[RMDB]
RNA sequence: GGGAACGACUCGAGUAGAGUCGAAAAUUGACCACACAACAAAACAACAGAUACUUGAUGAACACGCUGAGUGGUUUGAUGCCGGUGGCUUAGGUCCAAGUACACUACCCACUAGUCAUGAACGGUACAGCAUACGUGGAUUCGUCCACGUAUGCUGAAAAGAAACAACAACAACAAC
Reactivity to DMS in 0.01 (KOAc 150mM, MgCl2 10mM, bicine 150mM(pH8.5), 24C), signal-to-noise 2, nucleotides 027 to 126: u010u030g000a230c030c000a070c100a100c140a120a110c120a030a180a070a170c130a020a050c050a050g000a150u050a100c100u020u000g030a100u020g030a080a030c130a120c100g000c070u040g020a070g060u000g010g000u000u020u020g020a050u000g000c000c070g000g010u020g020g020c000u000u020a030g000g000u020c020c040a070a070g020u030a060c160a100c020u000a050c130c000c030a100c030u000a100g020u000c040a000u030g000a040a150c060g000g030u010a120
Reactivity to 2A3 in 0.01 (KOAc 150mM, MgCl2 10mM, bicine 150mM(pH8.5), 24C), signal-to-noise 3, nucleotides 027 to 126: u080u080g070a010c000c000a020c010a000c000a130a180c050a010a150a000a060c080a030a010c010a060g110a050u150a120c020u140u110g030a050u140g040a100a030c050a000c150g040c040u040g000a020g030u030g030g040u060u040u130g080a070u110g040c040c010g000g020u060g020g000c000u010u130a020g000g010u000c020c000a040a000g020u010a040c000a000c070u100a060c000c000c020a040c040u050a000g010u010c030a030u050g070a060a000c020g000g060u070a050